[RMDB]
This 177-nucleotide RNA was probed chemically with 2A3 and DMS. The RNA was probed in 150 mM KOAc, 10 mM MgCl2 and 150 mM bicine (pH 8.5) at 24 C. For DMS, 1,056 sequencing reads were counted. It was measured as part of the RMDB library OK2TRN.
RNA sequence: GGGAACGACUCGAGUAGAGUCGAAAAGAACCGCAGUGUUGGCUGGCCCGUUAUGCAUACGCGGAAGGAUUCGGCUGUGGGCAAUCUCGUGUAUCUACGGCCAAUUAUCGAAAUUGUACUCCAACGACAUUUCGCAUGACUUCGGUCAUGCGAAAUGAAAAGAAACAACAACAACAAC
Reactivity to 2A3 in 0.01 (KOAc 150mM, MgCl2 10mM, bicine 150mM(pH8.5), 24C), signal-to-noise 1, nucleotides 027 to 126: g000a070a000c000c000g010c000a000g020u060g000u160u040g000g000c030u000g000g000c030c040c040g040u170u060a090u150g070c030a010u030a100c050g010c100g050g110a110a010g130g000a020u030u060c110g170g050c020u080g030u130g120g090g000c040a040a050u020c070u040c090g050u050g000u000a090u030c010u040a020c000g000g030c000c000a010a010u050u070a190u240c040g010a020a010a000u060u150g050u050a090c040u020c010c000a020a010c000g050a000
Reactivity to DMS in 0.01 (KOAc 150mM, MgCl2 10mM, bicine 150mM(pH8.5), 24C), signal-to-noise 2, nucleotides 027 to 126: g010a170a220c040c030g030c070a070g000u010g000u000u000g020g030c040u000g000g020c090c000c030g010u020u010a120u020g010c130a050u000a050c040g010c040g000g010a120a110g050g000a050u000u000c110g020g050c000u010g040u000g000g010g020c080a070a020u000c050u010c040g000u000g010u000a050u000c020u000a050c020g010g010c030c010a060a040u000u000a160u010c090g000a030a050a080u020u000g000u010a080c140u000c010c020a020a030c070g010a160